[RMDB]
Chemical mapping of a 177-nucleotide RNA with 2A3 and DMS. For 2A3 the reverse transcriptase was SuperScript II with manganese. Source: RMDB library M2PK90, as collected in RNAgym.

RNA sequence: GGGAACGACUCGAGUAGAGUCGAAAAAAAGUGUACGAAAGAACAAAGAAGCAAUCAAUCCGAGUAGUGAAAUGAUGGCUUCAGUCCAAAAUGGGCAAACACUACAGACGGAGCCAAAGGCAAUUAAGAUACCUAUUUGUUUCGACAAAUAGGUAUCAAAAGAAACAACAACAACAAC
Reactivity to 2A3 in 0.01 (KOAc 150mM, MgCl2 10mM, bicine 150mM(pH8.5), 24C), signal-to-noise 4, nucleotides 027 to 126: a000a000a000g090u070g010u050a070c080g100a110a060a080g020a100a010c040a050a120a010g020a030a000g050c020a010a040u030c010a020a020u000c020c020g040a040g150u180a030g000u100g080a020a110a130u170g010a010u040g000g000c000u050u030c030a010g010u000c010c020a050a180a080a290u110g000g000g000c010a040a050a000c020a010c030u050a020c020a030g110a040c040g050g020a030g020c020c020a060a050a020g050g020c040a030a030u170u060a180a020
Reactivity to DMS in 0.01 (KOAc 150mM, MgCl2 10mM, bicine 150mM(pH8.5), 24C), signal-to-noise 4, nucleotides 027 to 126: a040a080a060g010u000g010u010a100c100g010a070a080a080g010a080a070c120a080a140a120g000a020a010g000c020a070a020u000c040a040a220u000c020c020g030a130g020u000a070g000u000g000a040a040a080u000g010a060u000g010g000c010u000u000c030a070g000u000c000c010a020a040a090a070u010g010g010g020c050a080a060a060c040a040c020u010a060c070a070g010a130c070g010g000a070g010c030c050a030a040a100g000g010c090a050a050u000u000a070a130
Annotation
Conditions: 150 mM KOAc, 10 mM MgCl2 and 150 mM bicine (pH 8.5), 24 C. The 2A3 profile rests on 4,948 reads.